[RMDB]
RNA sequence: GGGAACGACUCGAGUAGAGUCGAAAAGGCUACCGACGCGCGCGCGAAGGCCCUACUGCAUACGGUUGUAUCGGUUGCGCGCACAACCAACAUGCGUUGCGACUCCGGUUCGAACUGCCGAAACUGGUCUCGCUACGAAGUUCGCUUCGUAGCGAGAAAAAGAAACAACAACAACAAC
Reactivity to DMS in 0.01 (KOAc 150mM, MgCl2 10mM, bicine 150mM(pH8.5), 24C), signal-to-noise 1, nucleotides 027 to 126: g010g000c030u000a130c080c060g050a090c000g000c090g000c060g060c030g000c000g010a120a130g020g020c040c010c020u000a050c040u030g020c120a110u000a060c170g000g000u020u020g010u000a010u000c010g010g020u000u000g020c040g020c010g020c120a060c040a060a120c060c050a050a060c120a050u010g030c070g030u000u000g030c000g000a080c050u040c030c000g030g000u010u010c000g000a020a030c140u010g000c030c060g010a080a020a030c080u000g000g010